[RMDB]
RNA sequence: GGGAACGACUCGAGUAGAGUCGAAAAGAUAUGGAUCCAUGUUCACACCUUACAGACAUGAAGUCCUCCAUCGGAAACGAUGGUCUUCUUCAACAGCUGUAAGGUGUGAACCGCUGGAUCCUAAGUCCAGAUAAACCUUGUUCGCAAGGUUUAUCUGAAAAGAAACAACAACAACAAC
Reactivity to DMS in 0.01 (KOAc 150mM, MgCl2 10mM, bicine 150mM(pH8.5), 24C), signal-to-noise 5, nucleotides 027 to 126: g000a100u000a300u010g000g010a010u000c000c000a010u020g000u000u000c010a010c000a000c000c000u000u000a000c000a010g010a040c070a300u010g010a010a010g000u000c020c020u000c010c000a010u000c010g010g000a160a110a220c010g020a010u000g010g010u000c000u010u000c000u000u000c000a030a090c300a230g000c000u000g010u000a000a010g010g010u000g000u000g000a000a000c000c010g000c000u000g000g000a010u000c000c000u000a010a080g010u000c060
Reactivity to 2A3 in 0.01 (KOAc 150mM, MgCl2 10mM, bicine 150mM(pH8.5), 24C), signal-to-noise 2, nucleotides 027 to 126: g050a030u140a080u300g000g020a000u000c000c010a070u300g040u000u000c010a030c000a010c020c000u000u010a010c010a060g110a070c030a180u110g020a000a050g020u090c030c060u070c030c000a020u020c020g040g040a100a080a070c020g000a010u010g030g000u000c020u050u000c000u010u050c020a230a250c060a200g060c000u000g000u000a010a000g010g000u000g000u000g000a000a000c010c010g000c000u000g020g000a000u000c000c000u000a010a000g000u000c020